Chemical mapping of a 177-nucleotide RNA with DMS and 2A3. The reactions ran in a buffer of 150 mM KOAc, 10 mM MgCl2 and 150 mM bicine (pH 8.5), at 24 C. High 2A3 reactivity points to a flexible backbone, as in loops and unpaired stretches. It was measured as part of the RMDB library M2PK50. For DMS, 2,400 sequencing reads were counted.
[RMDB]
RNA sequence: GGGAACGACUCGAGUAGAGUCGAAAAGCCUAACAGUUCGCUGUUAGGCAAAUGCACAGACUUCGCAACUGUGAAAAACACAACAGAAGUGACUAUGCGAGGAUCGUUGCGUCUUCGGACGCAACAACAUAGGUGACCAGUUCGCUGGUCACCUAUGAAAAGAAACAACAACAACAAC
Reactivity to DMS in 0.01 (KOAc 150mM, MgCl2 10mM, bicine 150mM(pH8.5), 24C), signal-to-noise 3, nucleotides 027 to 126: g000c000c010u020a020a000c000a000g000u000u020c250g050c000u010g000u000u000a000g000g020c000a000a050a050u010g010c010a000c040a030g010a110c050u000u000c030g020c100a100a250c100u000g000u000g010a060a080a050a080a070c030a040c050a030a060c130a140g010a090a040g010u010g010a060c040u000a110u000g000c010g000a050g000g010a100u000c190g020u000u000g000c000g010u010c000u000u020c170g040g010a020c010g020c000a000a000c000a110a140
Reactivity to 2A3 in 0.01 (KOAc 150mM, MgCl2 10mM, bicine 150mM(pH8.5), 24C), signal-to-noise 3, nucleotides 027 to 126: g000c000c000u000a000a000c000a000g050u090u090c170g050c130u000g000u010u000a000g010g000c000a020a020a020u130g000c000a010c000a030g060a040c020u030u010c020g000c050a080a090c070u020g000u000g080a170a000a000a020a010c070a010c020a060a120c040a100g090a190a030g120u070g080a070c040u080a070u070g000c010g030a040g040g050a130u160c130g000u000u000g000c000g010u000c000u000u010c170g050g010a000c000g040c000a000a000c000a000a000